Source: RMDB library OK2TST, as collected in RNAgym. This 177-nucleotide RNA was probed chemically with 2A3 and DMS. High DMS reactivity at an A or C suggests that its Watson-Crick edge is free. For DMS the reverse transcriptase was MarathonRT.
[RMDB]
RNA sequence: GGGAACGACUCGAGUAGAGUCGAAAAAUCAGCACUUCGCCCACGCGUCGGAAGCUGAAAUACAGCAGCAGCAUGAUGAUGGCGAGCGUGAUUGGCACCACGACAUUUAAACGCUCUUUGGCGCGUACGUGCUGAUCACUUUCGAGUGAUCAGCACGAAAAGAAACAACAACAACAAC
Reactivity to 2A3 in 0.01 (KOAc 150mM, MgCl2 10mM, bicine 150mM(pH8.5), 24C), signal-to-noise 1, nucleotides 027 to 126: a000u070c050a010g020c000a010c070u040u050c060g030c000c030c000a060c080g060c000g010u060c010g000g030a020a000g070c030u010g080a110a030a000u300a050c170a070g000c050a000g030c000a000g080c010a060u160g000a050u020g020a030u070g110g000c020g060a020g020c050g000u020g060a060u070u030g010g010c000a020c090c070a010c050g040a030c010a000u090u090u140a160a130a000c000g020c000u000c100u020u130u090g090g000c090g010c020g010u020a010
Reactivity to DMS in 0.01 (KOAc 150mM, MgCl2 10mM, bicine 150mM(pH8.5), 24C), signal-to-noise 1, nucleotides 027 to 126: a060u000c040a040g000c030a120c050u000u000c020g030c000c060c130a090c240g000c040g010u030c020g010g000a130a150g020c020u000g000a020a050a060u000a090c150a150g030c000a010g010c010a040g030c150a060u030g020a210u040g010a040u000g000g000c040g000a020g030c050g030u000g010a120u000u010g040g010c070a130c030c030a070c090g000a060c150a100u000u010u000a040a120a070c060g000c000u000c040u000u000u020g020g010c140g010c000g040u000a020